[RMDB]
RNA sequence: GGGAACGACUCGAGUAGAGUCGAAAAGCCGCACAGCCAUGGUGACAGCAGAAUCAUUAGGCUAAUAACGCUUAUUUGCAUUCUUAUCAUGCCAGCAGCAUGCCGUUAAAUACUGCUUCACAGUGCUGGCCCGUUAUUGGUUCGCCAAUAACGGGCCAAAAGAAACAACAACAACAAC
Reactivity to 2A3 in 0.01 (KOAc 150mM, MgCl2 10mM, bicine 150mM(pH8.5), 24C), signal-to-noise 1, nucleotides 027 to 126: g060c000c000g030c000a010c050a010g000c000c080a110u050g040g030u000g000a000c090a050g000c000a000g030a130a020u110c040a050u030u170a040g000g110c040u000a070a050u110a290a070c090g030c000u000u130a090u070u190u000g060c040a000u030u150c020u070u210a030u200c080a090u050g010c010c000a000g000c000a000g000c000a040u000g040c000c000g010u000u060a020a000a040u060a050c010u000g000c000u000u000c070a100c000a020g070u060g040c000u000